[RMDB]
RNA sequence: GGGAACGACUCGAGUAGAGUCGAAAACGGGGGACCACCAGGUUGCCUAAGGAGGGGUGAACCGGCCCAGGUCGGAAACGGAGCAGGUCAAAACUCCCGUGCUGAUCAGUAGUGGGAUCGCGCCUGUGAAUAGCCACUGCACUCCAGCCUGGGCAACGUUAACAAUCCUGUUCGCAGGAUUGUUAACAAAAGAAACAACAACAACAAC
Reactivity to 2A3 in 0.01 (KOAc 150mM, MgCl2 10mM, bicine 150mM(pH8.5), 24C), signal-to-noise 2, nucleotides 027 to 156: c010g020g010g000g010g030a010c000c000a030c010c020a040g100g000u040u010g010c000c010u040a040a050g030g010a020g030g030g000g000u010g040a060a050c040c030g070g030c000c020c010a050g010g020u060c030g050g040a110a050a010c040g020g010a010g020c040a030g060g020u060c000a020a010a080a170c040u030c040c030c000g020u030g000c050u110g040a260u140c090a030g050u080a020g080u080g030g020g010a030u030c040g000c060g030c070c040u050g010u030g050a090a090u080a050g020c020c030a070c070u090g000c040a000c020u000c000c000a050g020c000c000u000g000g040g000c000a020a000c030
Source information:
Structure probing data (2A3) for a 207-nucleotide construct. For 2A3, 1,547 sequencing reads were counted. The reactions ran in a buffer of 150 mM KOAc, 10 mM MgCl2 and 150 mM bicine (pH 8.5), at 24 C. Reactivities are given for positions 27 through 156. The data come from the RNA Mapping Database (RMDB), library ARCHII.